[RMDB]
RNA sequence: GGGAACGACUCGAGUAGAGUCGAAAAGAUAUGGAAUACUCCAACAGCUCCCGAUCGGAAACGAUCGUGGAGACAUGGAGUUCCUAAGUCAAACAUAGCUCCCCAAGUUCGCUUGGGGAGCUAUGAAGUUUAGUAGUUUCUUCGGAAACUACUAAACAAAAGAAACAACAACAACAAC
Reactivity to DMS in 0.01 (KOAc 150mM, MgCl2 10mM, bicine 150mM(pH8.5), 24C), signal-to-noise 2, nucleotides 027 to 126: g010a020u010a230u010g000g000a030a070u000a050c000u000c000c000a000a080c210a210g010c000u000c000c010c010g000a010u010c000g000g020a080a070a170c020g020a000u000c010g030u020g040g000a000g010a000c070a110u000g000g000a010g010u010u000c000c000u000a050a190g000u000c010a160a150a300c010a010u010a020g000c000u000c000c000c000c000a000a010g010u000u020c300g020c000u020u000g000g000g010g010a000g000c020u000a000u010g000a040a110
Reactivity to 2A3 in 0.01 (KOAc 150mM, MgCl2 10mM, bicine 150mM(pH8.5), 24C), signal-to-noise 1, nucleotides 027 to 126: g000a000u060a010u130g000g000a060a010u050a300c000u040c020c020a090a120c070a170g000c000u000c000c000c000g000a010u000c030g000g000a130a050a020c020g010a000u010c000g090u300g010g010a000g030a000c010a020u050g000g000a000g010u030u010c000c000u000a110a010g080u040c050a110a110a050c010a080u010a020g000c020u040c020c000c010c010a000a020g030u090u140c140g090c240u000u000g010g000g130g010a000g030c000u000a000u000g010a000a000
Structure probing data (DMS and 2A3) for a 177-nucleotide construct. Source: RMDB library TTRDEL, as collected in RNAgym. The RNA was probed in 150 mM KOAc, 10 mM MgCl2 and 150 mM bicine (pH 8.5) at 24 C. For 2A3 the reverse transcriptase was SuperScript II with manganese. For 2A3, 1,793 sequencing reads were counted.